[RMDB]
RNA sequence: GGGAACGACUCGAGUAGAGUCGAAAAAGACUGUCUUCUACCACAGAGAACCCUUAUGUGGUUUCUCUCUCUGACAGACCAAUCCAUCGAAACAAGGAUCGAAAAGAUAAAAAUAACAUGGCACCCAGUGGUGUAUGAGAUUCGUCUCAUACACCACAAAAGAAACAACAACAACAAC
Reactivity to DMS in 0.01 (KOAc 150mM, MgCl2 10mM, bicine 150mM(pH8.5), 24C), signal-to-noise 1, nucleotides 027 to 126: a000g020a270c010u000g000u000c020u000u000c100u000a130c150c110a080c240a030g020a040g020a060a110c000c000c010u000u000a070u050g020u020g080g010u000u000u000c020u000c000u000c130u000c110u000g000a010c030a030g010a120c050c070a040a060u010c010c030a080u010c100g000a090a110a090c190a080a080g000g000a030u000c040g000a050a030a120a080g020a100u040a000a070a040a030a090u020a060a130c130a020u020g010g000c040a030c000c010c040a130
Reactivity to 2A3 in 0.01 (KOAc 150mM, MgCl2 10mM, bicine 150mM(pH8.5), 24C), signal-to-noise 2, nucleotides 027 to 126: a000g040a030c010u010g020u010c000u120u040c040u090a110c030c030a030c090a010g000a010g010a000a010c030c020c050u120u140a260u300g180u190g010g000u010u250u020c000u010c000u000c000u000c020u030g010a000c020a010g050a070c000c030a040a000u000c000c020a030u050c030g110a090a070a120c050a060a110g090g030a040u050c030g080a120a060a060a130g060a010u140a100a210a050a020a030u080a030a030c010a050u070g030g020c010a040c040c010c040a020